[RMDB]
RNA sequence: GGGAACGACUCGAGUAGAGUCGAAAACAUGGCCGGAAAUCGUGUAGGAUUCCGGCGGUCUCAUAUUGGAAAGUUCCAGCAUUCCAUGAAAGCGGACCUUAAGAAUGCCGAAACUUACUUUCAGUGACUGCCUACCACUAUUCGUAGUGGUAGGCAGAAAAGAAACAACAACAACAAC
Reactivity to DMS in 0.01 (KOAc 150mM, MgCl2 10mM, bicine 150mM(pH8.5), 24C), signal-to-noise 2, nucleotides 027 to 126: c190a080u010g020g010c000c020g020g030a030a070a010u010c030g020u010g030u020a120g030g000a050u000u000c000c000g000g040c000g000g010u000c020u010c030a120u010a080u000u000g020g000a070a010a020g010u010u000c010c010a030g010c010a050u000u000c010c070a100u000g010a090a060a080g000c100g000g000a110c080c070u000u000a100a060g020a040a000u000g020c030c030g000a040a040a010c020u000u000a110c100u010u010u000c090a090g020u000g000a200
Reactivity to 2A3 in 0.01 (KOAc 150mM, MgCl2 10mM, bicine 150mM(pH8.5), 24C), signal-to-noise 2, nucleotides 027 to 126: c020a080u130g140g000c010c020g030g010a020a060a100u030c020g000u110g300u300a080g180g040a010u010u010c000c010g000g010c000g000g000u000c000u010c010a120u140a090u210u090g050g000a130a020a020g000u000u050c020c000a010g020c000a010u040u000c030c010a050u120g090a070a020a030g050c060g020g020a070c000c000u020u010a100a010g020a030a000u000g000c010c000g010a000a010a040c000u010u040a020c020u010u060u100c020a010g010u060g100a060
An RNA of 177 nucleotides, treated with DMS and 2A3 and read out base by base. For 2A3, 1,178 sequencing reads were counted. The reactions ran in a buffer of 150 mM KOAc, 10 mM MgCl2 and 150 mM bicine (pH 8.5), at 24 C.